[RMDB]
Chemical mapping of a 207-nucleotide RNA with 2A3.
Source: RMDB library OK3TST, as collected in RNAgym.
Values cover nucleotides 27 to 156.

RNA sequence: GGGAACGACUCGAGUAGAGUCGAAAAGCCUGCCAACGUUACCCUAACCUCGUUCUCUGUAAUUGACCAAGCCAUUGCCCGCACUGACGUUACGAUUCAGUGGGAUUCCUCUCCUAAUGCCAUUGAAUAUGAGGUUGAGUGGCGGCGAGAUGAUAUGACACUGACCUAGGUUCGCCUAGGUCAGUGUAAAAGAAACAACAACAACAAC
Reactivity to 2A3 in 0.01 (KOAc 150mM, MgCl2 10mM, bicine 150mM(pH8.5), 24C), signal-to-noise 1, nucleotides 027 to 156: g000c000c000u080g060c020c000a070a100c070g010u060u100a070c000c000c000u010a020a010c000c000u000c020g000u090u080c010u010c020u030g120u150a130a090u090u140g100a090c100c000a020a000g050c030c030a010u010u170g040c000c000c010g060c010a030c040u020g010a010c000g130u100u100a000c100g030a100u040u030c000a000g000u000g000g030g000a000u120u110c000c000u080c030u000c000c050u080a030a000u090g270c000c000a000u020u000g000a040a000u070a120u130g050a040g000g000u020u020g020a010g020u020g010g000c010g000g000c000g050a000g000a000u040g000a000u190a100u190g040

Overview:
The reactions ran in a buffer of 150 mM KOAc, 10 mM MgCl2 and 150 mM bicine (pH 8.5), at 24 C.